RNA sequence: GGGAACGACUCGAGUAGAGUCGAAAAGACAAAUGCAGCAUAUUAGGCUAAGCAGGAAAGGGACGGUAGCUCCUGGUGUCAGUUCAUACGGUGUGAUGCAUCUGCGUCGUGCACACAUCCACCCAAAACGACAGUGUCGAUUCGUCGACACUGUCGUAAAAGAAACAACAACAACAAC
Reactivity to DMS in 0.01 (KOAc 150mM, MgCl2 10mM, bicine 150mM(pH8.5), 24C), signal-to-noise 2, nucleotides 027 to 126: g000a060c110a070a030a100u010g020c050a020g010c020a050u030a090u010u010a090g020g010c010u000a050a110g010c030a040g000g030a080a060a120g000g000g000a050c050g010g000u000a080g020c090u000c020c020u000g010g030u000g000u000c020a020g030u010u000c130a070u020a090c160g010g000u000g020u010g020a110u000g000c020a030u000c050u010g000c100g000u000c130g010u000g000c000a030c010a010c020a030u010c000c070a050c050c000c040a030a060a090
Reactivity to 2A3 in 0.01 (KOAc 150mM, MgCl2 10mM, bicine 150mM(pH8.5), 24C), signal-to-noise 1, nucleotides 027 to 126: g080a000c030a020a160a000u060g050c000a010g010c010a040u100a120u230u250a050g120g000c010u080a090a060g010c010a010g100g090a020a090a020g030g010g000a000c030g100g060u080a020g010c010u020c020c020u050g000g020u000g010u020c050a010g000u050u060c020a030u030a150c080g060g000u010g000u010g050a280u000g000c020a010u000c060u170g020c000g060u080c030g000u040g000c000a000c020a000c000a030u000c000c000a040c010c020c000a040a060a000
Source: RMDB library M2PK90, as collected in RNAgym. Chemical mapping of a 177-nucleotide RNA with DMS and 2A3. Reactivities are rounded to 0.1 and cut off at 0 and 3. The RNA was probed in 150 mM KOAc, 10 mM MgCl2 and 150 mM bicine (pH 8.5) at 24 C. The DMS profile rests on 1,321 reads.